This 177-nucleotide RNA was probed chemically with DMS and 2A3. The 2A3 profile rests on 2,286 reads. For DMS, 1,764 sequencing reads were counted. Reactivities are rounded to 0.1 and cut off at 0 and 3. Values cover nucleotides 27 to 126. It was measured as part of the RMDB library OK2TST.
[RMDB]
RNA sequence: GGGAACGACUCGAGUAGAGUCGAAAAAUAAACGAGGAUGAAGUGGAGCUCCUCAUCGAAGAACACCUUCGCGAGCGCGGAUGGAACCUUACCGACUUCACCGUGACCCGCAAACGCUGGCGCGAGGUCGUAGUAAUCACUUCGGUGAUUACUACGAAAAAGAAACAACAACAACAAC
Reactivity to DMS in 0.01 (KOAc 150mM, MgCl2 10mM, bicine 150mM(pH8.5), 24C), signal-to-noise 3, nucleotides 027 to 126: a100u020a010a060a110c120g010a030g010g020a030u010g010a120a140g010u000g010g010a070g000c030u000c010c010u000c050a100u000c110g010a070a090g000a120a090c190a090c080c020u000u000c030g020c060g020a120g030c050g020c020g020g010a100u010g020g010a040a060c110c070u010u020a160c090c030g000a080c050u000u000c020a020c040c020g000u010g000a090c030c000c010g000c090a110a090a090c110g010c040u010g030g000c050g020c070g000a080g000g020
Reactivity to 2A3 in 0.01 (KOAc 150mM, MgCl2 10mM, bicine 150mM(pH8.5), 24C), signal-to-noise 2, nucleotides 027 to 126: a000u150a020a090a020c080g020a010g020g010a020u040g040a100a030g010u030g020g030a000g040c030u020c000c010u000c040a070u120c060g140a130a050g050a070a060c040a040c060c000u090u060c020g000c040g030a050g040c050g000c010g030g010a080u080g100g030a050a050c030c030u110u110a060c050c000g000a060c010u020u030c010a020c030c020g050u040g100a180c040c000c030g050c000a130a250a030c130g000c040u030g060g040c010g000c020g010a010g010g010